An RNA of 177 nucleotides, treated with DMS and 2A3 and read out base by base. Conditions: 150 mM KOAc, 10 mM MgCl2 and 150 mM bicine (pH 8.5), 24 C. It was measured as part of the RMDB library M2PK50.
RNA sequence: GGGAACGACUCGAGUAGAGUCGAAAAGGUUCCGUCUUCGGACGGAACCAAACAUAGUAUACCCUGUUGCAUGUAUACUAUGAUAUACCGUAUUGCAACGGAAAAUGCCUAGUUUCGACUAGGCAAAACUUCUCAAUGACUUCGGUCAUUGAGAAGUAAAAGAAACAACAACAACAAC
Reactivity to DMS in 0.01 (KOAc 150mM, MgCl2 10mM, bicine 150mM(pH8.5), 24C), signal-to-noise 1, nucleotides 027 to 126: g010g010u000u000c000c000g010u000c000u000u010c220g030g000a010c000g000g010a000a010c000c000a020a060a060c000a010u000a000g010u000a000u000a010c000c050c060u010g000u000u000g000c000a030u010g000u000a020u010a000c000u000a000u010g000a080u000a050u020a180c000c030g030u000a090u000u000g010c000a000a010c010g010g000a050a020a130a130u020g010c000c000u000a000g010u010u000u030c170g000a000c010u010a000g000g010c000a000a000a050
Reactivity to 2A3 in 0.01 (KOAc 150mM, MgCl2 10mM, bicine 150mM(pH8.5), 24C), signal-to-noise 1, nucleotides 027 to 126: g000g000u010u000c010c000g000u000c020u030u070c200g090g000a000c000g000g020a000a000c000c000a000a000a000c000a000u000a000g010u000a000u000a000c010c030c120u170g010u010u010g000c000a010u020g000u010a000u010a010c000u000a000u020g000a010u020a020u010a050c010c010g030u060a170u040u120g000c010a020a020c010g070g020a100a140a010a050u070g000c000c000u010a010g000u000u070u090c100g010a050c000u000a000g010g020c010a020a000a000